About this RNA: The record gives the reactivity of an RNA of 207 nucleotides to 2A3 and DMS. The RNA was probed in 150 mM KOAc, 10 mM MgCl2 and 150 mM bicine (pH 8.5) at 24 C. It was measured as part of the RMDB library OK3TST. Values are in units of 0.01, from 0 to 300, in steps of 10.
RNA sequence: GGGAACGACUCGAGUAGAGUCGAAAACUGCCAAAUUGUUUUCCAAAGUGGCUGUCUGCCUACUUUUGAUUGCUGUCCAGUGUUCAAAUACUUGUUUUUGUAUUUUGUCUGGAGUACAUAGGUGUUAUCUGUGAGAAGGCAGAUCUAAUAGCAGCUAUAGUACCGUAUCAUUCGUGAUACGGUACUAAAAAGAAACAACAACAACAAC
Reactivity to 2A3 in 0.01 (KOAc 150mM, MgCl2 10mM, bicine 150mM(pH8.5), 24C), signal-to-noise 4, nucleotides 027 to 156: c020u080g050c020c010a090a090a090u080u080g020u020u030u050u040c080c030a120a060a010g070u070g060g000c030u040g010u030c010u010g010c000c000u030a100c010u110u120u190u100g050a040u030u090g030c010u060g060u060c000c000a020g000u010g110u190u150c040a000a030a000u010a010c010u080u070g180u300u300u210u180u120g020u040a050u020u060u030u060g080u020c000u000g050g010a020g060u070a090c070a100u160a090g060g020u040g070u250u100a050u020c040u060g090u050g110a030g020a080a030g020g020c000a000g010a040u010c000u060a070a130u080a080g030c010a000g020c010u030a010
Reactivity to DMS in 0.01 (KOAc 150mM, MgCl2 10mM, bicine 150mM(pH8.5), 24C), signal-to-noise 2, nucleotides 027 to 156: c040u000g000c010c040a060a160a140u000u000g010u000u010u000u000c020c060a070a100a090g030u010g020g060c010u010g010u000c040u000g020c020c000u000a150c020u000u010u010u000g010a090u000u000g030c000u000g000u000c000c010a070g050u010g010u000u010c130a030a040a030u000a030c030u000u000g010u000u000u000u000u000g010u000a020u000u000u000u000g020u010c040u000g030g020a060g030u000a080c060a140u000a080g010g040u010g010u000u000a040u000c020u000g030u000g000a090g010a160a100g000g040c000a050g040a050u000c070u010a060a140u000a070g020c030a040g020c030u010a300